[RMDB]
RNA sequence: GGGAACGACUCGAGUAGAGUCGAAAAAAUGAUUAACAAUCCAAGUACAGCAUAAAUAAACGUUCUUGUUGUUUACAUCAUUGAUAUUCCUUUCAAUCUAUUAAAUUUUAUUUUUCCUAUUUUCCAGAACAUUAUCUUUGUUCGCAAAGAUAAUGUUAAAAGAAACAACAACAACAAC
Reactivity to 2A3 in 0.01 (KOAc 150mM, MgCl2 10mM, bicine 150mM(pH8.5), 24C), signal-to-noise 8, nucleotides 027 to 126: a000a000u030g000a010u040u030a020a000c010a000a020u060c120c010a030a010g010u040a010c030a060g090c060a090u210a150a190a010u210a110a190a050c060g010u040u030c000u000u010g010u010u010g020u030u060u040a050c050a020u000c000a000u010u010g070a020u040a100u140u050c000c000u030u110u070c030a030a060u010c030u170a110u130u180a200a120a150u100u140u090u080a140u080u070u040u070u110c010c010u090a150u100u110u050u020c010c010a040g030
Reactivity to DMS in 0.01 (KOAc 150mM, MgCl2 10mM, bicine 150mM(pH8.5), 24C), signal-to-noise 3, nucleotides 027 to 126: a030a000u000g000a020u000u000a040a040c010a010a030u020c150c030a020a010g000u000a010c010a140g020c100a160u020a040a080a110u030a120a070a150c160g010u000u000c050u010u000g010u010u000g010u020u000u000a020c150a050u000c010a000u000u000g000a090u010a130u000u000c000c000u000u030u020c050a040a090u020c040u050a050u020u010a040a020a090u000u010u000u000a070u000u020u010u010u000c000c030u000a110u020u010u010u030c020c060a230g000
An RNA of 177 nucleotides, treated with 2A3 and DMS and read out base by base. Values cover nucleotides 27 to 126. The reactions ran in a buffer of 150 mM KOAc, 10 mM MgCl2 and 150 mM bicine (pH 8.5), at 24 C.